Source: RMDB library RFMREP, as collected in RNAgym. An RNA of 177 nucleotides, treated with DMS and 2A3 and read out base by base.
RNA sequence: GGGAACGACUCGAGUAGAGUCGAAAACGGUCGGCUCCGCGCUAGGUUUGGUCGCCUAGGGGAUGGAGAUAUGGAAAGGGUCUCGUGUGCUGUCAGUCGGUCGAAAGACGCGCUUGCAACAUGGGCCGUGUAUCCUUAACUUCGGUUAAGGAUACACAAAAGAAACAACAACAACAAC
Reactivity to DMS in 0.01 (KOAc 150mM, MgCl2 10mM, bicine 150mM(pH8.5), 24C), signal-to-noise 2, nucleotides 027 to 126: c080g010g020u000c070g010g030c010u000c000c020g000c020g000c020u000a010g010g010u000u000u000g010g030u000c220g010c000c000u000a030g010g000g060g010a070u010g010g000a050g010a090u000a110u010g030g010a100a070a110g000g000g010u000c000u000c010g020u000g010u000g000c000u000g000u000c300a010g010u020c020g040g010u000c020g010a130a110a150g000a020c010g020c030g010c040u020u010g000c020a040a030c010a030u000g010g000g000c070c040
Reactivity to 2A3 in 0.01 (KOAc 150mM, MgCl2 10mM, bicine 150mM(pH8.5), 24C), signal-to-noise 2, nucleotides 027 to 126: c000g020g090u040c010g090g000c020u000c010c000g020c020g010c040u010a020g000g000u010u070u110g020g030u060c020g030c000c010u000a010g000g030g040g060a070u090g040g030a000g040a060u140a100u180g130g070a090a130a110g170g000g030u020c050u020c060g000u000g000u000g030c050u020g000u020c010a020g070u060c010g010g000u000c020g030a060a030a000g030a000c050g000c000g000c300u000u010g020c050a090a020c020a040u030g000g000g000c020c000
2A3 adducts were read by reverse transcription with SuperScript II with manganese. For DMS, 1,705 sequencing reads were counted. The reactions ran in a buffer of 150 mM KOAc, 10 mM MgCl2 and 150 mM bicine (pH 8.5), at 24 C.